Source: RMDB library M2PK50, as collected in RNAgym.
This 177-nucleotide RNA was probed chemically with DMS and 2A3.
The 2A3 profile rests on 27,327 reads.
The reactions ran in a buffer of 150 mM KOAc, 10 mM MgCl2 and 150 mM bicine (pH 8.5), at 24 C.
For DMS, 8,774 sequencing reads were counted.
[RMDB]
RNA sequence: GGGAACGACUCGAGUAGAGUCGAAAACGAUUAGCAUUCGUGCUAAUCGAAUCAGGUAGUACCUAUCUCUAUUACCUGUAGUGCCCAACGUCCGGACAGAGAAUCGAGUCCUGUUCGCAGGACUCAAGGAUUAGGUUAUGUUCGCAUAACCUAAUCCAAAAGAAACAACAACAACAAC
Reactivity to DMS in 0.01 (KOAc 150mM, MgCl2 10mM, bicine 150mM(pH8.5), 24C), signal-to-noise 6, nucleotides 027 to 126: c010g010a010u000u000a000g010c000a040u000u010c220g030u000g020c000u000a000a000u000c000g010a070a090u000c020a010g010g010u010a010g010u000a030c220c110u010a110u000c100u000c090u000a010u000u000a010c000c000u000g000u000a090g010u000g020c000c000c000a120a120c160g000u000c070c040g010g000a080c160a090g000a060g000a090a110u010c150g010a010g010u000c010c000u000g000u000u010c200g010c000a000g000g000a020c000u000c000a040a060
Reactivity to 2A3 in 0.01 (KOAc 150mM, MgCl2 10mM, bicine 150mM(pH8.5), 24C), signal-to-noise 9, nucleotides 027 to 126: c010g000a000u000u000a000g000c010a010u010u070c220g110u070g000c000u000a000a000u000c000g010a010a080u090c010a000g020g000u010a010g010u020a030c020c040u140a170u170c060u000c010u020a010u020u010a020c000c010u000g020u050a050g060u030g040c000c000c010a020a040c060g110u040c060c040g080g070a070c040a070g060a010g040a100a100u160c120g000a020g010u000c000c000u000g010u030u050c280g010c050a000g000g000a000c000u010c010a000a030